[RMDB]
RNA sequence: GGGAACGACUCGAGUAGAGUCGAAAAGGGCGGCGGUCCUCAGUGCUCUUACUCUUUUCUGUAAAGAGGAGACUGCUGGACUCUCCGCCCAAGCCGAGAUGGGCCUCAGUUCCGAGCGAAGAGCCGACAAGUCAGGAGUUCGCUCCUGACAAAAGAAACAACAACAACAAC
Reactivity to 2A3 in 0.01 (KOAc 150mM, MgCl2 10mM, bicine 150mM(pH8.5), 24C), signal-to-noise 9, nucleotides 027 to 129: g000g000g000c010g000g010c020g000g010u010c010c000u010c010a030g020u140g200c020u010c010u060u210a300c000u010c000u040u060u070u050c150u190g280u300a010a000a000g000a000g010g000a000g000a000c000u000g070c050u000g000g000a000c010u020c020u000c100c000g000c000c000c000a000a000g000c000c000g000a020g000a020u030g000g000g000c000c010u030c010a010g000u090u020c020c010g000a010g010c020g010a020a010g020a020g020c010c000g030a050c050a100a050
Reactivity to DMS in 0.01 (KOAc 150mM, MgCl2 10mM, bicine 150mM(pH8.5), 24C), signal-to-noise 9, nucleotides 027 to 129: g020g020g000c000g000g010c300g000g010u010c000c000u020c020a000g030u020g060c040u030c030u040u070a300c010u020c020u030u040u010u000c190u090g020u080a020a040a010g020a030g000g030a030g030a050c010u000g040c160u000g030g010a030c000u030c070u000c010c000g000c000c020c010a000a010g000c050c010g000a020g000a020u000g010g010g000c040c020u020c080a030g020u000u040c020c060g020a000g020c100g020a040a020g040a100g040c080c040g000a100c150a100a080

Source: RMDB library 15KLIB, as collected in RNAgym. Structure probing data (2A3 and DMS) for a 170-nucleotide construct. The RNA was probed in 150 mM KOAc, 10 mM MgCl2 and 150 mM bicine (pH 8.5) at 24 C. For 2A3 the reverse transcriptase was SuperScript II with manganese. For DMS the reverse transcriptase was MarathonRT. For 2A3, 41,526 sequencing reads were counted.